[RMDB]
RNA sequence: GGGAACGACUCGAGUAGAGUCGAAAAUCGGCUGCGUGUUCCAUCUGGCGAAUGGAGACAUGCAUCCACACGAAGGACACGACGACGAUGACGAAGAGCAGCAUGAAGCAGCUCGUCCACAGGCCGACGCUACCGUCCUAUUCGUAGGACGGUAGCGAAAAGAAACAACAACAACAAC
Reactivity to DMS in 0.01 (KOAc 150mM, MgCl2 10mM, bicine 150mM(pH8.5), 24C), signal-to-noise 2, nucleotides 027 to 126: u010c090g000g000c070u000g020c030g050u000g020u010u010c010c000a000u000c010u000g020g020c090g020a260a050u000g010g000a030g000a060c070a000u000g040c020a050u020c010c020a080c140a100c100g050a030a050g000g010a040c040a120c020g010a070c070g000a080c080g010a080u010g000a110c120g010a040a080g020a130g050c040a050g030c030a140u000g000a160a160g000c020a080g000c020u000c040g000u000c020c130a070c130a050g020g010c030c020g000a090
Reactivity to 2A3 in 0.01 (KOAc 150mM, MgCl2 10mM, bicine 150mM(pH8.5), 24C), signal-to-noise 2, nucleotides 027 to 126: u060c010g020g040c010u000g000c000g010u000g030u080u000c010c000a020u000c020u040g050g020c060g080a080a080u080g010g000a040g050a040c010a000u050g000c000a020u000c020c000a050c000a010c060g070a130a030g020g010a010c010a010c080g100a010c030g020a010c010g030a050u110g030a050c030g050a100a080g030a020g020c060a000g000c040a050u090g100a160a020g010c040a020g000c000u020c030g000u000c000c010a090c020a050g030g060c010c000g020a020
The record gives the reactivity of an RNA of 177 nucleotides to DMS and 2A3. It was measured as part of the RMDB library OK2TRN. The RNA was probed in 150 mM KOAc, 10 mM MgCl2 and 150 mM bicine (pH 8.5) at 24 C.